[RMDB]
The record gives the reactivity of an RNA of 177 nucleotides to 2A3 and DMS. As a SHAPE reagent, 2A3 marks flexible, mostly unpaired nucleotides at the ribose 2'-OH. The 2A3 profile rests on 3,194 reads. It was measured as part of the RMDB library OK2TRN. The reactions ran in a buffer of 150 mM KOAc, 10 mM MgCl2 and 150 mM bicine (pH 8.5), at 24 C. For DMS, 1,840 sequencing reads were counted.
RNA sequence: GGGAACGACUCGAGUAGAGUCGAAAAUCGUCGCGCCGCCGAUUGCCACGCCGACGUCGUACAACGCGGGUUCGCCGUGCGUAUGCGGCCACCACGGCGUGACGUUCGCAAUCCUGAGCGUCGCGCAUCGAGUGCUAAUGUUCGCAUUAGCACUCGAAAAAGAAACAACAACAACAAC
Reactivity to 2A3 in 0.01 (KOAc 150mM, MgCl2 10mM, bicine 150mM(pH8.5), 24C), signal-to-noise 2, nucleotides 027 to 126: u070c020g130u050c010g000c000g010c030c030g010c000c000g000a000u000u030g020c020c000a010c010g000c010c000g080a090c010g010u040c000g010u030a020c070a170a020c130g020c010g010g050g060u130u090c120g030c070c040g100u080g010c030g000u040a030u100g000c000g020g020c000c000a050c020c010a100c050g000g000c010g000u000g000a050c060g160u100u110c020g000c010a000a050u030c020c100u090g020a020g000c000g010u030c000g000c000g000c010a050
Reactivity to DMS in 0.01 (KOAc 150mM, MgCl2 10mM, bicine 150mM(pH8.5), 24C), signal-to-noise 2, nucleotides 027 to 126: u000c160g030u010c000g020c060g020c050c020g030c040c040g000a010u010u010g010c030c020a000c010g020c030c000g000a090c290g010u000c010g020u060a080c140a090a060c110g010c020g000g000g010u010u010c120g000c000c020g020u010g010c070g010u000a150u000g010c010g010g060c030c050a070c180c180a230c010g000g000c010g040u000g000a020c090g020u000u010c110g010c040a030a040u030c050c230u030g000a090g000c010g000u000c020g000c010g010c120a120